[RMDB]
RNA sequence: GGGAACGACUCGAGUAGAGUCGAAAAUCUAUGGUAAGGAGUCACUUGAGAACCCAACCUACAUUUACCACUCCGCAUUCAUUGAGUGUGGAAGUUGUGGUAAUGAUUCCUGGCUUACAGGGAAUGCGAAGCUUCCACUUCGGUGGAAGCAAAAGAAACAACAACAACAAC
Reactivity to DMS in 0.01 (KOAc 150mM, MgCl2 10mM, bicine 150mM(pH8.5), 24C), signal-to-noise 9, nucleotides 027 to 129: u040c030u000a090u010g020g020u010a020a050g010g010a070g000u020c010a100c100u000u000g030a130g010a090a090c020c010c010a120a080c140c070u040a110c130a050u010u000u010a000c010c010a040c000u020c000c000g010c030a000u050u000c040a090u060u080g010a040g010u000g030u000g000g000a040a060g040u030u050g030u000g000g000u020a000a030u050g020a120u050u000c010c010u000g020g030c140u050u060a070c070a110g030g020g020a030a050u030g010c090g000a090a090
Reactivity to 2A3 in 0.01 (KOAc 150mM, MgCl2 10mM, bicine 150mM(pH8.5), 24C), signal-to-noise 9, nucleotides 027 to 129: u040c030u030a110u140g060g010u060a070a080g050g030a060g050u040c030a050c110u090u100g070a050g030a140a070c000c000c000a020a050c010c030u090a090c030a100u050u060u030a000c000c000a000c010u000c000c000g000c010a010u010u000c020a060u110u300g020a010g010u010g010u000g000g030a030a080g130u160u170g010u010g000g000u000a000a010u040g050a010u040u040c000c000u010g040g030c060u120u100a050c040a020g030g000g060a040a030u080g080c040g060a070a010